[RMDB]
Structure probing data (2A3 and DMS) for a 177-nucleotide construct. Reactivities are given for positions 27 through 126. Conditions: 150 mM KOAc, 10 mM MgCl2 and 150 mM bicine (pH 8.5), 24 C.

RNA sequence: GGGAACGACUCGAGUAGAGUCGAAAAGGUGGUAGUAGCAAAUAUUCAAAUGCGAACUUUGAAGACUGAAGUGGAGAAAGGUUCCGUGUGAUCAGUAAUUGGACACGGGUGAGUCGAUCCUAAGAGAUUAUCCUACGUAUUUCGAUACGUAGGAUAAAAAAGAAACAACAACAACAAC
Reactivity to 2A3 in 0.01 (KOAc 150mM, MgCl2 10mM, bicine 150mM(pH8.5), 24C), signal-to-noise 7, nucleotides 027 to 126: g070g000u100g060g080u130a070g010u020a020g050c030a020a100a050u130a140u140u160c080a070a070a060u070g020c050g020a040a000c020u020u020u070g060a080a030g010a010c020u050g040a090a040g100u080g090g070a070g100a090a100a040g100g010u090u040c020c030g010u010g010u010g040a140u070c010a020g090u160a230a110u180u110g030g000a000c010a010c010g000g000g020u100g000a000g010u000c000g010a010u000c000c010u020a080a000g060a010g000a060
Reactivity to DMS in 0.01 (KOAc 150mM, MgCl2 10mM, bicine 150mM(pH8.5), 24C), signal-to-noise 9, nucleotides 027 to 126: g010g030u010g020g020u010a070g020u020a130g010c050a030a080a110u030a110u030u040c190a060a100a110u010g010c060g010a100a070c040u000u000u000g000a150a270g010a030c040u010g010a080a100g030u010g010g010a100g000a060a080a080g000g010u020u020c000c000g010u000g010u010g010a110u030c040a050g010u050a100a100u020u000g010g000a030c010a010c020g000g010g020u020g000a010g010u000c000g000a060u000c000c000u000a070a100g010a110g010a150
Description:
2A3 adducts were read by reverse transcription with SuperScript II with manganese.